[RMDB]
RNA sequence: GGGAACGACUCGAGUAGAGUCGAAAAAUGCAUUAUAGCUACGCGCGGCUAUAAUCGAUUAAUUAUAUAUAGCCGCGAUCGAUUAUAGCGCGCGCCGUAUAAUGCUAUACGAUCGUAGCCGUAGCGCCUGUUCUCUAGUUUUCGAACUAGAGAACAGAAAAGAAACAACAACAACAAC
Reactivity to 2A3 in 0.01 (KOAc 150mM, MgCl2 10mM, bicine 150mM(pH8.5), 24C), signal-to-noise 4, nucleotides 027 to 126: a020u060g000c000a000u020u050a020u050a080g130c040u050a020c020g010c010g000c000g150g030c020u000a000u000a000a000u000c000g000a000u030u090a100a050u240u140a250u050a100u050a040u130a300g180c060c030g060c100g030a000u010c000g000a000u010u010a000u000a020g010c100g020c000g000c010g000c110c000g000u010a010u010a010a030u080g020c020u010a040u000a030c030g040a100u140c090g050u080a010g020c000c020g060u070a030g020c030g030c070
Reactivity to DMS in 0.01 (KOAc 150mM, MgCl2 10mM, bicine 150mM(pH8.5), 24C), signal-to-noise 4, nucleotides 027 to 126: a120u010g000c000a000u000u000a010u000a060g020c030u000a030c060g020c010g020c000g010g030c000u000a000u000a000a010u000c010g000a020u000u010a070a170u010u010a150u010a240u010a230u000a210g010c180c140g020c180g010a000u000c010g000a030u000u000a000u000a010g010c000g000c000g010c020g020c020c040g010u000a010u000a010a050u010g010c090u000a060u000a030c040g000a080u000c080g010u010a070g010c020c030g000u000a040g010c100g020c110
Conditions: 150 mM KOAc, 10 mM MgCl2 and 150 mM bicine (pH 8.5), 24 C.
The record gives the reactivity of an RNA of 177 nucleotides to 2A3 and DMS.
For DMS the reverse transcriptase was MarathonRT.
For 2A3, 4,075 sequencing reads were counted.
It was measured as part of the RMDB library OK2TRN.
Values cover nucleotides 27 to 126.